Chemical mapping of a 177-nucleotide RNA with 2A3. For 2A3, 739 sequencing reads were counted. The reactions ran in a buffer of 150 mM KOAc, 10 mM MgCl2 and 150 mM bicine (pH 8.5), at 24 C.
RNA sequence: GGGAACGACUCGAGUAGAGUCGAAAACACAAUAAGUAAACUGACUGUGGUUUGCAUUGUGCUCAACAACUGUUAGCUUCAUCAGUCAGCUAGCGAGUGCUCACUAUCAAAACAAUUUCAUUGGUUACAGUCAGCACGUGUUCGCACGUGCUGACUGAAAAGAAACAACAACAACAAC
Reactivity to 2A3 in 0.01 (KOAc 150mM, MgCl2 10mM, bicine 150mM(pH8.5), 24C), signal-to-noise 2, nucleotides 027 to 126: c040a050c000a040a050u190a300a000g020u010a000a000a020c000u030g300a050c080u140g030u180g200g000u000u010u020g040c040a000u000u010g000u000g030c100u090c090a000a270c010a000a060c040u070g020u120u000a000g000c000u030u080c050a160u000c000a030g060u010c020a000g000c010u000a000g040c000g050a000g020u060g020c030u080c010a020c010u080a070u180c000a000a000a000a080c020a130a070u000u060u150c030a070u030u070g000g030u170u130a030